This 177-nucleotide RNA was probed chemically with DMS and 2A3. Conditions: 150 mM KOAc, 10 mM MgCl2 and 150 mM bicine (pH 8.5), 24 C. It was measured as part of the RMDB library OK1LIB.

RNA sequence: GGGAACGACUCGAGUAGAGUCGAAAAGAAAGGCGAAGUGUGGAUACGUGAGCCGAAAAGCGUAGAAAUAAGCCGACACACGAAUUUAAGGCGAUUUGUGUAGAUGAAAAAUGUACACGUUGAAGAAGGGUAAUCUUUUGUUCGCAAAAGAUUACCCAAAAGAAACAACAACAACAAC
Reactivity to DMS in 0.01 (KOAc 150mM, MgCl2 10mM, bicine 150mM(pH8.5), 24C), signal-to-noise 2, nucleotides 027 to 126: g010a120a080a110g030g000c070g000a100a050g020u000g020u000g000g020a140u030a030c070g010u000g000a120g020c040c080g000a110a040a070a180g030c030g040u020a040g010a150a100a090u010a090a140g000c050c000g000a150c110a100c050a010c000g010a020a050u000u020u000a140a070g000g020c040g000a050u030u020u030g040u000g000u020a050g000a060u020g000a060a070a040a080a040u010g000u000a030c040a040c000g010u000u000g000a040a100g000a090a050
Reactivity to 2A3 in 0.01 (KOAc 150mM, MgCl2 10mM, bicine 150mM(pH8.5), 24C), signal-to-noise 2, nucleotides 027 to 126: g050a120a000a000g100g000c080g020a020a300g030u020g020u020g080g140a000u010a080c010g000u000g020a040g000c000c000g170a110a110a000a010g010c000g090u090a010g050a000a040a000u120a100a000g000c000c000g090a000c020a000c000a000c080g020a060a050u160u100u070a140a000g150g020c100g020a000u010u040u020g010u000g000u000a080g020a180u090g180a070a140a080a000a000u000g000u000a040c050a000c190g040u080u100g020a000a000g080a010a110